[RMDB]
Description:
Structure probing data (2A3 and DMS) for a 177-nucleotide construct. It was measured as part of the RMDB library OK2TRN.
RNA sequence: GGGAACGACUCGAGUAGAGUCGAAAAGCACGAAGGGCACGCUCGCGCGUUCGCUCGACGCGAUCGCCGCGCAGACAUCACCGCUGAUCGUCGCCGUACGCGUGCCGACCGGCAAGGACGCGGACGCAAUCGCAGGAAUAUUCGUAUUCCUGCGAUUAAAAGAAACAACAACAACAAC
Reactivity to 2A3 in 0.01 (KOAc 150mM, MgCl2 10mM, bicine 150mM(pH8.5), 24C), signal-to-noise 7, nucleotides 027 to 126: g060c020a020c180g050a100a090g030g000g000c020a000c020g010c000u040c020g020c010g000c010g020u020u010c020g020c020u080c110g200a060c100g000c000g000a010u010c010g080c160c030g000c010g000c020a030g030a050c010a060u070c030a030c050c100g040c130u070g020a070u040c080g050u030c030g010c050c010g050u120a030c070g000c010g020u040g070c010c000g010a040c020c000g000g040c050a070a070g080g000a030c040g000c020g030g020a020c040g000c100
Reactivity to DMS in 0.01 (KOAc 150mM, MgCl2 10mM, bicine 150mM(pH8.5), 24C), signal-to-noise 9, nucleotides 027 to 126: g020c050a090c070g020a100a130g010g010g000c020a040c040g010c020u000c060g020c100g000c010g000u000u000c030g020c020u010c200g010a110c210g010c000g000a020u000c020g020c080c040g030c060g010c120a110g000a040c070a050u000c050a070c110c110g010c110u000g000a060u000c100g010u000c030g010c110c040g000u010a060c130g000c010g010u000g010c000c000g010a050c070c030g000g000c060a120a100g000g000a080c070g010c020g010g000a110c100g000c150